[RMDB]
RNA sequence: GGGAACGACUCGAGUAGAGUCGAAAACGCUUUGGUCGUAAGAAUGGCAUGAUUACCGCUACAAUUAUUUUGAUUGUGUCUACAGCCCUGUGUACGGGUGCUUACGGCUACAAGGGCAGUAUCAAUACACGUACGCGCAGUUCGCUGCGCGUACGUGAAAAGAAACAACAACAACAAC
Reactivity to DMS in 0.01 (KOAc 150mM, MgCl2 10mM, bicine 150mM(pH8.5), 24C), signal-to-noise 1, nucleotides 027 to 126: c060g040c020u000u020u000g020g000u000c060g030u000a010a020g000a160a120u030g000g000c000a040u010g000a030u010u010a210c280c130g000c160u000a070c160a130a050u000u000a120u000u010u030u040g000a060u000u000g010u000g000u030c000u030a180c200a230g020c000c000c000u010g010u020g020u010a150c290g050g010g010u000g000c000u000u000a000c010g000g000c000u000a030c250a010a020g000g050g000c050a000g030u000a090u020c180a010a060u020a080
Reactivity to 2A3 in 0.01 (KOAc 150mM, MgCl2 10mM, bicine 150mM(pH8.5), 24C), signal-to-noise 1, nucleotides 027 to 126: c040g060c000u020u040u100g010g000u010c000g020u000a000a000g080a080a140u140g000g040c030a020u000g010a000u000u050a090c030c000g060c150u110a090c110a150a300u300u090a210u030u230u100u160g030a000u020u040g010u020g000u040c010u030a070c050a030g000c030c000c000u080g110u030g010u110a120c080g000g030g010u000g000c000u010u000a010c000g000g000c010u040a020c040a030a000g020g000g050c020a000g030u050a050u230c060a040a010u090a070